The record gives the reactivity of an RNA of 177 nucleotides to DMS. For DMS, 2,167 sequencing reads were counted.
RNA sequence: GGGAACGACUCGAGUAGAGUCGAAAAGAUAUGGAAUCGGUUCUCGCGAUAAGACGCGGUCGGAAACGACCGGCGUCUUUUGACGCGAGGCCGAUUCCUAAGUCAAAGCGCAAGUUCGCUUGCGCAAUCUUAUGACCUGGUUCGCCAGGUCAUAAGAAAAAGAAACAACAACAACAAC
Reactivity to DMS in 0.01 (KOAc 150mM, MgCl2 10mM, bicine 150mM(pH8.5), 24C), signal-to-noise 2, nucleotides 027 to 126: g010a080u000a300u010g020g000a010a000u000c000g000g020u000u020c000u000c000g080c010g010a180u010a010a020g000a000c000g030c000g000g000u010c000g000g010a100a080a200c000g010a020c000c000g030g040c010g010u000c000u000u000u000u000g010a200c120g000c010g000a030g000g000c000c000g000a000u000u000c000c000u000a000a080g000u020c050a100a140a220g000c020g000c000a020a030g000u000u030c300g010c010u000u000g000c000g050c010a030a010
For DMS the reverse transcriptase was MarathonRT.